This 177-nucleotide RNA was probed chemically with DMS and 2A3. The DMS profile rests on 563 reads.
RNA sequence: GGGAACGACUCGAGUAGAGUCGAAAACGACAUGGCUUCGGCCAUGUCGAAAGGACGAGUCAGACCGAAACGGAGGUAGGUCCAACUACCUUCUCACUCAAAAAAUCCGUUUGUUCGCAAACGGAAAGUCUUCCACAUUGUUCGCAAUGUGGAAGACAAAAGAAACAACAACAACAAC
Reactivity to DMS in 0.01 (KOAc 150mM, MgCl2 10mM, bicine 150mM(pH8.5), 24C), signal-to-noise 1, nucleotides 027 to 126: c000g040a010c000a000u000g010g000c000u010u020c040g080g000c010c000a000u000g020u010c020g000a010a020a150g000g000a130c060g000a060g040u000c080a020g000a300c100c050g010a050a020a020c200g020g030a000g000g000u000a000g060g070u040c200c240a150a240c000u000a000c000c000u000u010c000u000c180a080c150u020c120a010a000a040a160a190a080u000c000c000g000u000u000u000g000u000u000c210g020c000a000a050a020c000g000g000a000a010a100
Reactivity to 2A3 in 0.01 (KOAc 150mM, MgCl2 10mM, bicine 150mM(pH8.5), 24C), signal-to-noise 1, nucleotides 027 to 126: c020g020a000c000a000u000g000g000c000u040u040c200g100g000c000c000a000u010g020u000c000g000a000a000a000g000g020a010c010g000a000g020u020c000a010g020a140c000c050g060a120a060a000c140g000g010a020g000g040u000a000g030g100u000c100c000a090a080c000u000a000c000c000u020u020c010u040c010a090c000u080c000a030a100a030a000a010a040u020c020c000g000u000u010u030g040u040u070c200g010c080a000a000a000c000g020g050a020a000a000

Values are in units of 0.01, from 0 to 300, in steps of 10. Values cover nucleotides 27 to 126. It was measured as part of the RMDB library M2PK50. DMS adducts were read by reverse transcription with MarathonRT. For 2A3 the reverse transcriptase was SuperScript II with manganese.